[RMDB]
RNA sequence: GGGAACGACUCGAGUAGAGUCGAAAAGGCCGCUGAAAAGUGGUGUGGCACUGCUCCGGCGAGGACGUGGGCGGACCGGCGGGAUGGGCUCCAGUCACCGGCUCGGUGGGCGACCGUCCCUUCCCAUCCCCGCCUAUACUUUCGAGUAUAGGCGGGGAAAAGAAACAACAACAACAAC
Reactivity to 2A3 in 0.01 (KOAc 150mM, MgCl2 10mM, bicine 150mM(pH8.5), 24C), signal-to-noise 1, nucleotides 027 to 126: g080g020c000c000g010c030u030g080a160a180a030a000g060u060g000g080u070g000u100g070g010c010a000c020u030g010c030u010c020c020g040g020c100g110a080g030g070a060c070g010u140g020g020g030c060g040g050a140c000c000g000g020c050g000g000g000a020u020g010g010g000c020u040c020c000a060g000u050c020a020c120c120g090g170c070u030c060g040g090u110g010g040g030c000g010a020c000c000g030u060c000c000c100u000u000c060c000c000a040u020
An RNA of 177 nucleotides, treated with 2A3 and read out base by base. Source: RMDB library RFM100, as collected in RNAgym. For 2A3, 682 sequencing reads were counted. For 2A3 the reverse transcriptase was SuperScript II with manganese. The RNA was probed in 150 mM KOAc, 10 mM MgCl2 and 150 mM bicine (pH 8.5) at 24 C.